[RMDB]
An RNA of 207 nucleotides, treated with 2A3 and DMS and read out base by base. Values cover nucleotides 27 to 156.

RNA sequence: GGGAACGACUCGAGUAGAGUCGAAAAAGCAUGUUAGGUUCGCAUGGUGCACUAUUGUGUUAUUAGUAACUAAGUAAGCGUACAAUCGAAAAUGUUUAACCAUAAAAGGGUAAAAUGGUGUAAGACAGAUACCCUCUGAGCUUCGGCUCAGAGGGAACGUUUAGCACAUGUUCGCAUGUGCUAAACGAAAAGAAACAACAACAACAAC
Reactivity to 2A3 in 0.01 (KOAc 150mM, MgCl2 10mM, bicine 150mM(pH8.5), 24C), signal-to-noise 5, nucleotides 027 to 156: a000g080c050a040u080g010u100u080a060g050g040u060u130c040g010c050a010u050g060g010u050g050c050a020c040u090a090u120u120g030u020g020u020u040a050u040u020a040g090u050a050a020c030u000a020a090g090u020a150a000g040c020g040u070a040c070a060a070u120c060g070a130a020a000a000u030g040u010u060u040a040a010c010c000a010u070a060a170a010a010g080g010g000u080a090a080a000a000u030g000g000u040g030u050a050a030g020a020c030a020g070a060u070a090c000c000c000u020c000u000g000a000g010c020u030u140c230g060g000c000u000c000a000g000a000g000g010g000a000a000
Reactivity to DMS in 0.01 (KOAc 150mM, MgCl2 10mM, bicine 150mM(pH8.5), 24C), signal-to-noise 2, nucleotides 027 to 156: a090g050c010a040u010g050u010u000a070g040g040u000u010c060g020c070a070u000g000g030u010g020c040a040c000u000a060u010u010g000u010g010u000u000a080u000u000a160g010u000a040a130c050u010a080a120g000u000a030a070g020c010g010u000a040c050a040a090u000c060g000a090a060a080a090u000g000u000u010u000a070a070c020c020a070u010a050a070a110a100g020g010g010u000a040a040a070a060u010g010g010u010g010u010a050a070g020a120c050a060g030a170u000a100c000c010c000u000c010u020g000a020g000c000u000u000c300g040g040c010u000c000a000g010a010g020g010g010a000a000